[RMDB]
RNA sequence: GGGAACGACUCGAGUAGAGUCGAAAAGCAGUCUAUAUGGGACGAAGUGCAAUGUGGAACAUACAGCUGCCGAGAUAUCUUACGUCAAGAUGGUCCAGGAUGACAUUCACCCAUACUCGUACACCACGUGGUAACCGAAAUUCGUUUCGGUUACCACAAAAGAAACAACAACAACAAC
Reactivity to 2A3 in 0.01 (KOAc 150mM, MgCl2 10mM, bicine 150mM(pH8.5), 24C), signal-to-noise 2, nucleotides 027 to 126: g020c040a020g000u050c070u070a080u020a080u220g050g030g020a130c040g010a120a020g150u140g070c050a030a070u190g040u010g030g030a020a050c030a040u130a080c010a040g050c040u010g040c030c000g040a020g000a100u160a060u050c050u040u050a030c050g060u020c030a010a050g050a070u060g010g040u020c030c000a000g040g050a080u020g030a010c010a030u040u010c000a100c040c000c000a030u060a100c050u040c030g010u070a040c060a010c080c000a030c130
Reactivity to DMS in 0.01 (KOAc 150mM, MgCl2 10mM, bicine 150mM(pH8.5), 24C), signal-to-noise 2, nucleotides 027 to 126: g040c070a070g040u010c060u010a070u040a040u010g000g000g000a150c100g020a080a080g010u010g020c100a040a060u020g040u000g020g010a110a130c100a020u000a060c030a180g020c060u000g000c050c030g000a110g000a090u000a090u010c060u000u010a050c150g000u010c070a050a050g000a050u000g010g010u020c010c050a100g000g020a030u000g010a030c050a070u000u010c050a070c030c020c010a050u000a040c060u000c020g000u010a050c150a160c060c070a100c170